[RMDB]
Overview: Chemical mapping of a 177-nucleotide RNA with DMS and 2A3. Values cover nucleotides 27 to 126. DMS adducts were read by reverse transcription with MarathonRT. High 2A3 reactivity points to a flexible backbone, as in loops and unpaired stretches. In probing experiments dimethyl sulfate is read out at A N1 and C N3, which are open when not base-paired.

RNA sequence: GGGAACGACUCGAGUAGAGUCGAAAAGUGGGACACUAUAAUUUAUAAUAAUAGUGCGAAUACUGCGUUUUCUUACAUGGCAUGAGAUGUAAGAAAACUAACAGUUAGAUUUAAACAGAUGGAGAUAACAUUACCUCCUUUUCGAAGGAGGUAAUGUAAAAGAAACAACAACAACAAC
Reactivity to DMS in 0.01 (KOAc 150mM, MgCl2 10mM, bicine 150mM(pH8.5), 24C), signal-to-noise 5, nucleotides 027 to 126: g020u030g020g020g010a300c000a010c000u010a010u000a080a100u010u010u080a110u040a150a160u020a080a030u000a010g010u000g000c060g020a110a080u020a000c000u010g040c100g000u010u000u000u000c010u000u000a000c010a010u010g000g020c130a080u030g000a060g010a010u000g000u020a000a010g000a010a000a000a010c000u000a090a150c030a010g010u000u000a050g000a160u010u010u020a060a090a110c090a060g010a080u000g010g000a090g000a090u030a080
Reactivity to 2A3 in 0.01 (KOAc 150mM, MgCl2 10mM, bicine 150mM(pH8.5), 24C), signal-to-noise 7, nucleotides 027 to 126: g090u080g010g070g040a040c000a000c010u030a030u030a110a180u110u230u130a250u090a130a120u170a110a030u010a030g000u010g010c020g060a070a040u100a100c000u000g010c030g000u000u000u000u000c000u000u000a010c010a010u010g110g100c060a050u160g050a080g020a160u000g040u000a000a000g000a000a000a000a010c000u010a070a010c000a000g000u020u030a030g010a100u050u110u220a090a120a040c070a010g140a090u150g080g010a070g030a090u140a100